The record gives the reactivity of an RNA of 177 nucleotides to DMS.
The DMS profile rests on 518 reads.
Conditions: 150 mM KOAc, 10 mM MgCl2 and 150 mM bicine (pH 8.5), 24 C.
It was measured as part of the RMDB library OK2TRN.
RNA sequence: GGGAACGACUCGAGUAGAGUCGAAAAGAAACAGGGUCAAGUUGGUCAACAUGGGUUUCGCAACACUCAGGGAACACGUCCCAAACGGCGUCAAGAACAAGAAGAUGAGCAAAGUGGAGACUCUGCGAACGAGCCUAACAUUCGUGUUAGGCUCGUUAAAAGAAACAACAACAACAAC
Reactivity to DMS in 0.01 (KOAc 150mM, MgCl2 10mM, bicine 150mM(pH8.5), 24C), signal-to-noise 1, nucleotides 027 to 126: g000a170a110a190c210a090g060g030g000u000c040a090a090g000u020u000g040g020u000c030a070a060c090a090u000g000g000g010u000u000u000c070g080c030a090a090c180a020c080u000c030a030g030g000g000a020a120c100a000c040g010u000c040c020c030a100a000a200c250g000g010c090g000u000c080a050a080g000a090a230c080a070a090g000a080a090g000a080u000g000a090g040c040a000a110a110g040u000g000g010a110g010a080c010u000c020u030g000c160g000